[RMDB]
RNA sequence: GGGAACGACUCGAGUAGAGUCGAAAAGAUAUGGACCUGAAGGUUCUUUUGACGCUGAUGUACUCGGAAACGAGUACGCAGCGAUAAGAACCCAGGUCCUAAGUCAAAACUCCACUUCGGUGGAGAAUCUUAUAGGUCACUUCGGUGACCUAUAAGAAAAAGAAACAACAACAACAAC
Reactivity to DMS in 0.01 (KOAc 150mM, MgCl2 10mM, bicine 150mM(pH8.5), 24C), signal-to-noise 2, nucleotides 027 to 126: g000a050u000a300u010g000g000a020c000c000u010g010a260a140g010g010u000u000c000u020u010u000u000g030a230c160g010c000u000g000a070u020g010u000a010c010u010c000g020g000a070a150a140c000g010a010g000u010a000c000g010c010a000g010c010g000a060u010a010a010g010a020a020c000c010c000a010g010g000u020c000c000u000a000a050g010u000c010a090a120a110a120c000u000c000c000a000c000u000u020c220g010g000u000g000g000a000g000a040a020
Reactivity to 2A3 in 0.01 (KOAc 150mM, MgCl2 10mM, bicine 150mM(pH8.5), 24C), signal-to-noise 1, nucleotides 027 to 126: g010a030u080a020u140g010g010a010c020c010u030g150a270a140g030g030u040u020c040u020u110u090u130g270a170c090g000c000u060g010a300u180g070u000a000c000u010c000g060g000a050a140a030c010g000a010g000u020a000c010g000c020a010g000c000g000a000u000a040a000g020a000a000c010c000c000a000g010g000u020c000c000u000a020a010g020u000c000a000a000a080a150c000u000c020c000a000c010u070u050c290g240g000u020g000g000a030g010a010a020
Structure probing data (DMS and 2A3) for a 177-nucleotide construct. For DMS the reverse transcriptase was MarathonRT. The reactions ran in a buffer of 150 mM KOAc, 10 mM MgCl2 and 150 mM bicine (pH 8.5), at 24 C. DMS (dimethyl sulfate) methylates the pairing face of unpaired adenines and cytosines. 2A3 adducts were read by reverse transcription with SuperScript II with manganese.